[RMDB]
RNA sequence: GGGAACGACUCGAGUAGAGUCGAAAAUCAUUGAUUAUUGUUCAGGCAAUAUUGCACCACACAGAAAGCCCACCACUUUUAAGCACUUGGAUGCUUUUCUGUUAGAAGAGCUUAGAACUGGUUGAGGAUACCUAGCAGUCUUCGGACUGCUAGGUAUAAAAGAAACAACAACAACAAC
Reactivity to DMS in 0.01 (KOAc 150mM, MgCl2 10mM, bicine 150mM(pH8.5), 24C), signal-to-noise 1, nucleotides 027 to 126: u030c050a120u010u010g020a110u030u000a060u000u000g020u010u010c130a080g000g000c000a030a070u000a080u010u000g040c040a090c030c010a060c120a170c130a100g000a060a140a130g020c020c010c030a050c010c010a050c080u000u000u000u000a010a040g010c020a070c040u000u000g030g000a070u000g000c060u030u000u020u000c100u000g000u000u000a180g020a050a000g000a050g000c000u000u000a030g020a030a030c070u000g010g000u010u010g010a110g010g010